[RMDB]
RNA sequence: GGGAACGACUCGAGUAGAGUCGAAAAUAAAACAUGGUUACCAUAAACUAAGCGUGAAGGUAGCCAUGAACACGCUUAGUUAAAUAUAAGCUGAGCGUUAGGAAAAACCUAAUGCUCAGCAAAAAAAUCGAACUAAUAGAUUCGUCUAUUAGUUCGAAAAAGAAACAACAACAACAAC
Reactivity to 2A3 in 0.01 (KOAc 150mM, MgCl2 10mM, bicine 150mM(pH8.5), 24C), signal-to-noise 2, nucleotides 027 to 126: u050a000a050a010a000c030a040u040g080g000u030u070a040c020c010a050u110a120a100a000c010u020a050a000g040c000g020u020g100a190a040g080g000u010a010g000c000c000a000u020g020a000a000c030a000c000g030c020u040u010a010g030u060u130a130a090a030u210a060u030a150a060g010c000u000g000a010g000c010g000u000u000a000g000g030a120a120a030a090a090c010c000u000a000a000u020g000c000u010c000a000g010c010a000a020a020a000a000a000a040
Reactivity to DMS in 0.01 (KOAc 150mM, MgCl2 10mM, bicine 150mM(pH8.5), 24C), signal-to-noise 3, nucleotides 027 to 126: u000a090a040a060a300c050a020u000g020g020u010u000a070c010c020a180u000a110a060a030c010u000a000a020g020c020g010u000g020a070a070g000g010u000a000g010c060c060a020u010g010a090a090c110a040c010g010c010u000u000a010g000u000u000a050a100a100u010a090u010a040a120g000c000u000g000a000g000c010g040u000u000a000g000g000a080a210a060a160a170c010c000u000a000a000u000g010c000u000c000a000g010c000a000a000a030a110a020a030a020